[RMDB]
RNA sequence: GGGAACGACUCGAGUAGAGUCGAAAAGUGUGAGUUGGCGGUGGAACCCCCUCGUGGUGACACGAGCCCCCGUGGCCAAAAGCCCAGUGUUUACAGCACCUCUCACAUCCAGGGAAACCCCACCCUGGGUGCCAAUCUUUUUCGAAAGAUUGGCACCAAAAGAAACAACAACAACAAC
Reactivity to DMS in 0.01 (KOAc 150mM, MgCl2 10mM, bicine 150mM(pH8.5), 24C), signal-to-noise 1, nucleotides 027 to 126: g010u030g040u010g000a000g000u070u000g000g040c020g000g000u010g000g000a050a160c020c070c000c070c010u050c000g020u000g030g000u070g000a270c000a000c000g000a080g010c100c000c010c170c000g020u010g000g000c040c000a110a090a060a300g000c000c000c300a060g000u040g050u000u030u040a040c170a050g000c000a080c000c000u010c000u000c000a050c020a000u040c260c000a000g000g000g010a090a070a210c000c000c000c000a090c010c000c040u000g000
Reactivity to 2A3 in 0.01 (KOAc 150mM, MgCl2 10mM, bicine 150mM(pH8.5), 24C), signal-to-noise 3, nucleotides 027 to 126: g050u030g000u000g010a020g020u140u040g030g020c040g010g030u070g030g030a110a090c010c020c020c020c010u000c000g000u010g010g010u060g030a050c000a000c000g000a010g030c000c000c000c000c000g040u080g030g000c020c020a030a050a030a040g040c010c010c000a000g010u000g070u090u090u100a070c060a030g000c000a000c010c000u000c000u010c000a010c010a010u010c020c000a000g020g000g040a070a140a140c020c010c000c010a010c000c000c000u000g010
Structure probing data (DMS and 2A3) for a 177-nucleotide construct. Conditions: 150 mM KOAc, 10 mM MgCl2 and 150 mM bicine (pH 8.5), 24 C. It was measured as part of the RMDB library RFM100. DMS adducts were read by reverse transcription with MarathonRT.